About this RNA:
The record gives the reactivity of an RNA of 177 nucleotides to DMS and 2A3. Conditions: 150 mM KOAc, 10 mM MgCl2 and 150 mM bicine (pH 8.5), 24 C. The DMS profile rests on 6,454 reads. For 2A3 the reverse transcriptase was SuperScript II with manganese. Source: RMDB library OK2TRN, as collected in RNAgym.
[RMDB]
RNA sequence: GGGAACGACUCGAGUAGAGUCGAAAAGUUCACGCGGGGAUUCCAGCGUCUCGAUGGUGGCCGACGUGGCGUUAUCCUCCCCGGCCAGCAGGGUGGCUAUUUCGGCCAUGAUACUUUUGCCGCUGCCGACUUAACCGUAUUUCGAUACGGUUAAGUCAAAAGAAACAACAACAACAAC
Reactivity to DMS in 0.01 (KOAc 150mM, MgCl2 10mM, bicine 150mM(pH8.5), 24C), signal-to-noise 3, nucleotides 027 to 126: g000u000u010c050a040c060g010c050g000g000g000g000a170u010u010c050c030a080g020c020g020u000c050u000c080g000a080u000g020g030u000g000g000c010c010g010a070c070g010u000g000g000c040g000u000u010a080u010c080c040u010c030c010c010c020g010g000c040c060a090g000c080a070g010g000g020u010g010g000c010u010a090u000u010u000c100g000g000c000c000a030u010g000a100u010a040c060u000u000u000u010g020c040c030g010c060u000g000c150c090
Reactivity to 2A3 in 0.01 (KOAc 150mM, MgCl2 10mM, bicine 150mM(pH8.5), 24C), signal-to-noise 3, nucleotides 027 to 126: g020u070u070c020a000c060g060c020g040g000g000g060a110u190u140c040c040a020g020c020g060u010c040u050c080g090a070u100g060g090u010g010g040c010c010g030a090c020g020u040g020g000c010g020u110u110a050u070c000c020u040c010c000c010c000g010g010c040c010a020g020c030a020g000g030g080u030g020g000c000u010a060u060u110u120c030g000g000c000c000a020u030g020a020u050a100c060u060u130u080u110g020c000c010g050c030u050g050c040c030